Source: RMDB library OK2TRN, as collected in RNAgym. Structure probing data (2A3 and DMS) for a 177-nucleotide construct. DMS adducts were read by reverse transcription with MarathonRT. For 2A3, 1,340 sequencing reads were counted.
[RMDB]
RNA sequence: GGGAACGACUCGAGUAGAGUCGAAAAGCACAGUCUGGCAAAACCAAAAAGCACGACGGUCAUCAGCACCAGUGCGUUGAUGAGGGCCACCAUGCCGCCUGACGGCAGAAAGCCGAUGGCGAGGAGACUCCCUGAUACGAUUCGUCGUAUCAGGGAGAAAAGAAACAACAACAACAAC
Reactivity to 2A3 in 0.01 (KOAc 150mM, MgCl2 10mM, bicine 150mM(pH8.5), 24C), signal-to-noise 1, nucleotides 027 to 126: g040c030a040c030a090g040u040c010u070g010g030c000a000a000a100a160c020c020a090a020a000a010a000g040c000a030c040g120a020c060g010g030u000c010a170u000c040a130g060c020a020c000c000a070g040u070g060c010g060u060u020g000a080u070g030a050g020g050g000c010c000a030c000c020a050u100g020c030c020g030c020c010u070g110a090c000g040g000c000a020g200a220a130a010g020c000c000g010a020u030g020g000c050g000a030g000g080a050g050a070
Reactivity to DMS in 0.01 (KOAc 150mM, MgCl2 10mM, bicine 150mM(pH8.5), 24C), signal-to-noise 3, nucleotides 027 to 126: g020c050a090c120a040g010u000c040u000g000g010c060a030a040a150a110c070c020a050a030a080a140a100g020c020a040c030g030a050c140g010g000u000c020a090u000c150a030g010c070a030c020c090a140g010u020g020c010g010u000u000g000a040u000g010a100g030g000g000c010c000a100c090c030a080u010g030c020c010g010c000c030u000g010a220c280g000g000c020a080g000a070a090a130g030c000c000g010a200u010g020g010c020g010a120g000g000a180g030a170
About this RNA:
The reactions ran in a buffer of 150 mM KOAc, 10 mM MgCl2 and 150 mM bicine (pH 8.5), at 24 C.